[RMDB]
RNA sequence: GGGAACGACUCGAGUAGAGUCGAAAAAGAUGUCCAUAGAAGGCACUUGGUGGGUUAGGACUUGGGUAUAGCAGUCAGACUGAUGGGAGGAUGAUAUACAGAUCAAAUGCCAGGUGAUUUGUUUAUAGAGAGAAAUACAACUGCUUAGGGUACCUGACUCCCUAUCCUAGUUCGCUAGGAUAGGGAGAAAAGAAACAACAACAACAAC
Reactivity to DMS in 0.01 (KOAc 150mM, MgCl2 10mM, bicine 150mM(pH8.5), 24C), signal-to-noise 1, nucleotides 027 to 156: a130g000a120u000g010u010c040c020a190u000a210g000a090a100g050g000c010a040c040u000u000g030g030u020g010g000g050u000u010a060g020g010a110c060u000u000g010g040g020u000a100u010a020g020c000a090g020u000c060a180g020a130c030u010g010a090u000g010g020g040a140g010g030a050u000g000a050u000a060u030a080c060a010g000a040u010c030a050a110a100u000g000c080c090a060g030g030u010g000a060u000u000u000g010u010u000u000a100u000a060g020a110g000a110g010a030a080a090u000a050c070a040a050c060u000g020c020u000u000a070g010g000g040u000a110c020c030u000g000a250
Reactivity to 2A3 in 0.01 (KOAc 150mM, MgCl2 10mM, bicine 150mM(pH8.5), 24C), signal-to-noise 3, nucleotides 027 to 156: a010g110a100u060g020u020c020c020a040u100a120g110a030a090g100g010c020a020c080u040u080g010g010u070g000g030g030u070u100a050g080g010a090c080u090u100g000g000g000u100a070u080a080g020c030a010g020u150c030a050g030a110c030u080g050a050u080g070g050g000a020g020g010a010u040g040a000u030a000u030a080c050a000g030a030u030c020a040a010a060u110g090c040c010a010g060g020u010g010a050u040u010u020g040u030u070u030a100u120a020g040a000g040a000g060a020a030a040u140a100c050a050a030c070u020g010c000u070u050a030g070g010g000u100a070c020c000u010g000a030

Source: RMDB library OK3TST, as collected in RNAgym. The record gives the reactivity of an RNA of 207 nucleotides to DMS and 2A3. Values are in units of 0.01, from 0 to 300, in steps of 10. For 2A3, 1,513 sequencing reads were counted. High DMS reactivity at an A or C suggests that its Watson-Crick edge is free. The reactions ran in a buffer of 150 mM KOAc, 10 mM MgCl2 and 150 mM bicine (pH 8.5), at 24 C. 2A3 adducts were read by reverse transcription with SuperScript II with manganese.